Annotation:
The record gives the reactivity of an RNA of 115 nucleotides to 2A3 and DMS. Reactivities are given for positions 27 through 95. The RNA was probed in 150 mM KOAc, 10 mM MgCl2 and 150 mM bicine (pH 8.5) at 24 C. Source: RMDB library P50LIB, as collected in RNAgym.
RNA sequence: GGGAACGACUCGAGUAGAGUCGAAAAGCGCCUGGACUUAAAGCCAUUGCACUUAAGAAAAUAAACAAACAAAAUAAAUUAUUAUUCGUAAUAAUAAAAGAAACAACAACAACAAC
Reactivity to 2A3 in 0.01 (KOAc 150mM, MgCl2 10mM, bicine 150mM(pH8.5), 24C), signal-to-noise 3, nucleotides 027 to 095: g020c020g060c010c020u020g030g010a090c020u100u160a050a050a020g010c000c000a050u050u190g010c030a030c060u050u060a060a030g070a070a130a030a010u220a030a060a020c060a030a060a030c050a040a130a050a050u210a090a110a050u110u050a070u020u000a020u010u060c040g010u030a000a040u090a080a050u170a160
Reactivity to DMS in 0.01 (KOAc 150mM, MgCl2 10mM, bicine 150mM(pH8.5), 24C), signal-to-noise 3, nucleotides 027 to 095: g020c090g010c010c150u000g000g000a060c040u020u030a070a100a140g020c010c030a060u000u010g000c030a060c050u010u020a090a120g010a080a040a040a100u030a050a040a060c080a050a050a080c040a060a050a080a100u020a070a090a100u000u010a050u000u000a060u020u030c080g000u000a030a040u000a030a020u020a000